[RMDB]
RNA sequence: GGGAACGACUCGAGUAGAGUCGAAAAGAUAUGGAGCCUUGGGAGAACUCUCCUCGGAAACGAGGAACGUGAGUUCGACGAUCAAGCUCCUAAGUCAAACAUAUCUGUAGUUCGCUACAGAUAUGAACCCACCCUAUAGGUUCGCCUAUAGGGUGGGAAAAGAAACAACAACAACAAC
Reactivity to DMS in 0.01 (KOAc 150mM, MgCl2 10mM, bicine 150mM(pH8.5), 24C), signal-to-noise 1, nucleotides 027 to 126: g000a030u000a300u010g010g000a000g030c130c080u000u000g000g050g000a100g000a010a000c000u010c000u000c000c030u000c010g000g000a140a040a160c010g020a000g000g000a090a060c300g010u010g000a030g020u000u000c000g000a180c150g010a030u010c000a040a000g010c010u000c000c000u030a030a070g010u010c030a110a110a210c010a010u000a000u000c000u000g050u000a000g000u000u000c180g010c000u010a000c020a000g000a000u000a000u000g010a070a140
Reactivity to 2A3 in 0.01 (KOAc 150mM, MgCl2 10mM, bicine 150mM(pH8.5), 24C), signal-to-noise 1, nucleotides 027 to 126: g010a020u040a090u170g010g000a010g030c080c080u000u000g020g000g010a050g000a000a000c020u000c010u000c010c020u020c030g000g000a000a110a030c010g020a000g050g030a000a150c120g300u190g030a000g000u000u000c020g030a020c000g020a020u050c000a010a000g000c000u000c000c000u030a170a020g040u030c060a110a050a090c000a010u000a010u010c000u000g000u000a020g030u000u070c300g010c180u010a010c020a010g000a010u000a010u010g000a010a000

The data come from the RNA Mapping Database (RMDB), library TTRDEL. The record gives the reactivity of an RNA of 177 nucleotides to DMS and 2A3. For 2A3, 1,863 sequencing reads were counted.